The record gives the reactivity of an RNA of 207 nucleotides to DMS and 2A3. It was measured as part of the RMDB library OK3TST.

[RMDB]
RNA sequence: GGGAACGACUCGAGUAGAGUCGAAAAGAAAGAGCCUGAAUACGGAGAACCGUAACGCAUGACCGAAUAUUCAGCCCAGUUCACGACGUAAGUCGUGCGCCCGAGUCUUGGUCUGGGCGCUGGGGUCACGUACAUGCGUCAGGCAGGACCGAGAGAAGUAUUUAUUAAUGUUCGCAUUAAUAAAUACAAAAGAAACAACAACAACAAC
Reactivity to DMS in 0.01 (KOAc 150mM, MgCl2 10mM, bicine 150mM(pH8.5), 24C), signal-to-noise 2, nucleotides 027 to 156: g020a100a040a130g010a140g030c030c010u010g020a060a240u000a030c010g000g000a180g020a070a220c010c020g020u010a070a250c040g010c010a020u010g000a130c060c020g010a110a090u010a150u010u000c120a220g000c010c000c010a080g020u000u010c050a050c020g020a030c010g010u020a140a150g020u010c030g010u000g020c090g010c010c000c010g000a060g010u020c050u000u010g020g010u010c000u000g020g000g010c010g040c020u000g010g040g020g000u000c020a080c030g000u000a090c030a040u010g000c010g000u000c010a020g020g020c050a080g010g010a030c020c000g010a280g010a120g020a140a260
Reactivity to 2A3 in 0.01 (KOAc 150mM, MgCl2 10mM, bicine 150mM(pH8.5), 24C), signal-to-noise 5, nucleotides 027 to 156: g090a020a080a010g100a010g000c000c000u030g050a090a050u070a030c010g040g010a120g130a300a200c010c000g010u020a020a010c000g000c000a000u000g010a030c030c040g070a130a060u120a130u260u160c040a050g030c000c010c000a020g030u160u180c020a000c010g010a010c020g050u140a120a100g000u010c000g000u000g000c020g000c000c000c000g060a050g070u020c020u030u050g040g010u000c030u050g000g000g000c000g000c000u010g010g000g010g020u110c060a010c100g030u060a070c000a000u010g000c010g020u020c000a000g010g000c000a000g020g040a010c000c020g000a000g000a010g000a160a020

Conditions: 150 mM KOAc, 10 mM MgCl2 and 150 mM bicine (pH 8.5), 24 C.